[RMDB]
RNA sequence: GGGAACGACUCGAGUAGAGUCGAAAAGUUGCAAAUUUGUAGAUUCUUUAGAAUAGAACUAACUCAAGCCCUUCAUUCUGCAGCUGAGGCUCACUGCCCCCAGUGGGCAGUGGGUCCAGGGGGUUAAACCUUCUGGUAAUUUCGAUUACCAGAAGGUAAAAGAAACAACAACAACAAC
Reactivity to 2A3 in 0.01 (KOAc 150mM, MgCl2 10mM, bicine 150mM(pH8.5), 24C), signal-to-noise 6, nucleotides 027 to 126: g070u070u060g020c020a030a090a180u150u140u110g040u050a080g070a300u060u030c020u050u150u090a100g040a130a070u100a100g020a040a030c030u040a040a040c010u030c140a080a040g000c000c000c000u070u050c070a150u130u040c050u080g050c020a040g030c010u010g030a110g040g000c000u010c000a000c000u000g000c000c000c000c010c010a050g020u300g030g000g000c000a000g000u000g000g000g000u000c010c000a000g010g010g000g000g000u020u110a060a080
Reactivity to DMS in 0.01 (KOAc 150mM, MgCl2 10mM, bicine 150mM(pH8.5), 24C), signal-to-noise 4, nucleotides 027 to 126: g010u000u010g010c050a040a080a100u040u010u000g000u000a060g020a120u000u010c010u010u000u020a120g010a130a110u020a050g010a060a050c070u010a040a050c080u000c080a080a080g000c050c030c010u000u010c100a080u000u010c080u010g000c050a070g000c000u000g000a110g000g000c010u000c000a010c000u020g000c020c000c010c000c240a130g020u050g000g010g000c000a000g010u000g000g010g010u000c000c000a030g000g000g020g010g000u000u010a040a080
About this RNA: An RNA of 177 nucleotides, treated with 2A3 and DMS and read out base by base. DMS adducts were read by reverse transcription with MarathonRT. For 2A3 the reverse transcriptase was SuperScript II with manganese. The reactions ran in a buffer of 150 mM KOAc, 10 mM MgCl2 and 150 mM bicine (pH 8.5), at 24 C.